[RMDB]
RNA sequence: GGGAACGACUCGAGUAGAGUCGAAAAGGGCUCCACGGAAAUACGGUGCCGGAUAACGUCCGGCGGGGGCGACCCCAGGGAAAGUGCCACAGAGAGCAAACCGCCAUGCCUUGCAUGGUAAGGGUGAGGUAUCAGUUUACUUCGGUAAACUGAUACCAAAAGAAACAACAACAACAAC
Reactivity to DMS in 0.01 (KOAc 150mM, MgCl2 10mM, bicine 150mM(pH8.5), 24C), signal-to-noise 3, nucleotides 027 to 126: g020g000g020c000u000c030c020a100c040g020g020a050a110a080u050a080c110g000g020u020g000c000c000g000g000a050u010a090a130c200g000u000c000c000g000g000c000g060g040g020g010g020c150g010a240c030c000c000c020a130g000g000g020a050a060a100g000u010g000c070c020a140c150a100g010a130g000a080g020c050a030a060a060c010c030g000c020c000a010u000g010c020c160u030u060g010c010a010u000g000g020u010a050a040g020g040g000u000g020a170
Reactivity to 2A3 in 0.01 (KOAc 150mM, MgCl2 10mM, bicine 150mM(pH8.5), 24C), signal-to-noise 4, nucleotides 027 to 126: g030g020g010c030u040c020c010a080c060g080g060a140a060a010u190a100c060g090g000u080g020c000c000g000g010a060u060a060a090c120g120u010c000c000g000g000c020g000g000g030g010g000c000g030a050c010c000c000c010a020g020g020g020a090a110a030g070u060g030c000c020a030c070a010g140a010g010a000g070c030a120a060a030c000c000g000c000c000a010u000g010c020c150u110u290g020c000a000u000g020g010u090a070a110g030g000g020u030g060a070
This 177-nucleotide RNA was probed chemically with DMS and 2A3. For DMS the reverse transcriptase was MarathonRT. Source: RMDB libraries RFM100 and RFMREP, as collected in RNAgym. Reactivities are given for positions 27 through 126. For 2A3 the reverse transcriptase was SuperScript II with manganese. In probing experiments dimethyl sulfate is read out at A N1 and C N3, which are open when not base-paired. For 2A3, 2,093 sequencing reads were counted.